An RNA of 177 nucleotides, treated with 2A3 and DMS and read out base by base. For DMS, 763 sequencing reads were counted. Conditions: 150 mM KOAc, 10 mM MgCl2 and 150 mM bicine (pH 8.5), 24 C. For 2A3 the reverse transcriptase was SuperScript II with manganese. DMS adducts were read by reverse transcription with MarathonRT. Source: RMDB library M2PK50, as collected in RNAgym.

RNA sequence: GGGAACGACUCGAGUAGAGUCGAAAAUCUCGCAAGUUCGCUUGCGAGAGUAAUAAAUAAAAUGGGUUCAAGUCCCCCCCUUUUCCGAGGGUAUCGGAAACCGUACAAACGGCUUCGGCCGUUUGAAGAUCAAUUUUCAGUUCGCUGAAAAUUGAUCAAAAGAAACAACAACAACAAC
Reactivity to 2A3 in 0.01 (KOAc 150mM, MgCl2 10mM, bicine 150mM(pH8.5), 24C), signal-to-noise 1, nucleotides 027 to 126: u030c000u000c000g000c000a000a030g010u140u120c190g020c190u000u020g010c000g010a010g000a010g000u010a030a150u010a010a040a030u160a080a110a010a050u110g040g030g020u120u080c070a060a000g100u080c010c010c040c000c010c000c020u020u080u030u000c000c000g010a000g010g020g120u130a000u000c000g030g000a000a000a000c050c060g080u190a100c000a010a000a000c000g000g000c000u000u020c080g080g000c010c000g000u000u000u010g000a000a000
Reactivity to DMS in 0.01 (KOAc 150mM, MgCl2 10mM, bicine 150mM(pH8.5), 24C), signal-to-noise 1, nucleotides 027 to 126: u020c000u000c000g030c020a000a000g000u010u040c240g030c000u010u010g000c020g000a000g000a010g000u010a080a110u000a060a090a110u000a070a020a110a090u040g010g010g010u000u000c130a060a300g010u000c020c000c000c010c020c000c040u000u000u000u000c030c020g020a010g000g000g010u010a040u000c020g000g010a000a010a080c300c170g010u010a130c000a000a030a010c000g000g000c010u000u010c190g040g020c010c010g010u000u000u010g000a080a070